[RMDB]
RNA sequence: GGGAACGACUCGAGUAGAGUCGAAAAUCUCCUAUUCCAACACGUCCUCGUCGUACAGAGUGGUAACAUGUGUCACCACAUAUCCAAGCUUGGGUACACGGGCUUGACCCAACCCCUUGGGCGGAUGAAAACCAGAUUACGUUCGCGUAAUCUGGAAGCAUUCUAACUGCUUCGGCAGUUAGAAUGCAAAAGAAACAACAACAACAAC
Reactivity to 2A3 in 0.01 (KOAc 150mM, MgCl2 10mM, bicine 150mM(pH8.5), 24C), signal-to-noise 1, nucleotides 027 to 156: u000c080u080c000c010u020a050u150u150c040c020a120a060c060a020c080g060u060c050c040u050c020g100u020c010g040u070a120c080a180g190a040g120u070g000g050u160a170a040c050a080u110g290u060g000u100c050a000c060c010a070c050a110u160a010u010c000c000a050a040g000c020u000u020g000g000g010u000a000c010a010c020g060g030g000c080u250u230g070a300c000c000c030a000a030c000c010c000c040u000u000g000g000g000c000g000g000a050u060g040a140a150a000a000c000c000a010g000a000u000u000a000c000g040u030u060c270g010c000g060u000a000a000u010c000u000g000g000a000a000
The record gives the reactivity of an RNA of 207 nucleotides to 2A3. The 2A3 profile rests on 543 reads. The RNA was probed in 150 mM KOAc, 10 mM MgCl2 and 150 mM bicine (pH 8.5) at 24 C. Source: RMDB library M2RFPK, as collected in RNAgym.